[RMDB]
RNA sequence: GGGAACGACUCGAGUAGAGUCGAAAAGUUUAUGUUUAUGAGUGUGUAGAAUUAGAUCAACAUUGUUCUCUGUGGCGGAUUUGUUAGUGGCUGAGGGAAAGGUAGCAGCUGGAUGCUGUAAUUCUCUCGAGAGACAUUCCUACUGCUGAGUGAGGAAGCCUUUUAGUAUAUUCGUAUACUAAAAGGCAAAAGAAACAACAACAACAAC
Reactivity to 2A3 in 0.01 (KOAc 150mM, MgCl2 10mM, bicine 150mM(pH8.5), 24C), signal-to-noise 3, nucleotides 027 to 156: g030u050u130u070a070u090g040u050u100u020a120u120g040a050g030u080g000u040g010u100a020g100a170a080u140u060a070g040a100u110c030a020a070c030a060u050u110g030u160u020c040u000c040u070g050u030g000g030c030g060g000a070u120u060u080g040u030u030a060g020u020g020g010c060u050g030a030g020g000g020a030a030a050g060g020u080a040g010c000a000g010c010u080g060g110a070u130g030c010u010g010u060a050a100u030u020c010u000c000u010c020g050a060g000a000g010a030c010a020u060u060c000c000u050a050c010u010g030c030u040g080a040g040u030g020a030g030g050a070a040
Reactivity to DMS in 0.01 (KOAc 150mM, MgCl2 10mM, bicine 150mM(pH8.5), 24C), signal-to-noise 1, nucleotides 027 to 156: g030u010u000u000a080u030g000u010u010u010a120u000g000a130g070u000g000u000g000u010a050g030a030a120u000u010a100g000a140u010c050a070a070c060a140u000u000g030u000u000c010u000c050u010g010u000g010g020c040g020g000a100u000u010u000g000u010u000a110g020u000g000g020c000u000g020a090g010g000g000a090a070a120g020g000u010a110g010c000a030g010c010u000g020g020a090u010g030c020u000g010u000a030a180u000u010c020u000c010u000c040g020a080g010a150g010a070c050a070u000u000c020c010u000a030c100u000g020c020u030g020a060g040u020g010a080g040g000a150a300